[RMDB]
RNA sequence: GGGAACGACUCGAGUAGAGUCGAAAAUGAAUAUCCUUUUCUGUAUCUCACAACCGCAUAGGAAUACCAACCUUGCUUUAGCAGAUUGAUUGGUAAUUAUUCAAGUAGAGGGCCAGCAUCGGCACUCGCAUUUCUCCUCUUUCGAGAGGAGAAAUGCAAAAGAAACAACAACAACAAC
Reactivity to 2A3 in 0.01 (KOAc 150mM, MgCl2 10mM, bicine 150mM(pH8.5), 24C), signal-to-noise 1, nucleotides 027 to 126: u060g010a030a000u020a030u020c030c000u100u000u050u000c030u080g080u090a100u010c050u020c050a110c060a070a110c060c010g030c040a070u120a060g050g000a080a050u030a090c020c000a000a020c010c020u000u040g000c000u050u150u250a040g010c090a020g020a180u050u090g050a080u050u020g000g000u040a100a040u160u100a080u070u020c060a000a020g040u020a070g120a020g000g020g010c040c000a040g110c090a200u170c110g000g010c010a010c020u000c010
Reactivity to DMS in 0.01 (KOAc 150mM, MgCl2 10mM, bicine 150mM(pH8.5), 24C), signal-to-noise 2, nucleotides 027 to 126: u000g010a060a090u000a090u010c030c020u010u000u010u020c060u030g020u000a150u000c050u030c040a100c110a070a060c090c110g020c080a070u000a030g000g010a130a210u010a050c070c100a020a020c060c030u000u010g010c000u000u000u010a150g030c060a020g000a070u000u000g000a030u010u010g000g000u000a020a090u010u010a070u010u010c050a040a110g040u030a140g010a020g000g010g020c020c010a080g000c200a060u010c150g010g000c020a040c040u000c050
Notes: The record gives the reactivity of an RNA of 177 nucleotides to 2A3 and DMS. For DMS the reverse transcriptase was MarathonRT. In probing experiments dimethyl sulfate is read out at A N1 and C N3, which are open when not base-paired. The DMS profile rests on 1,239 reads.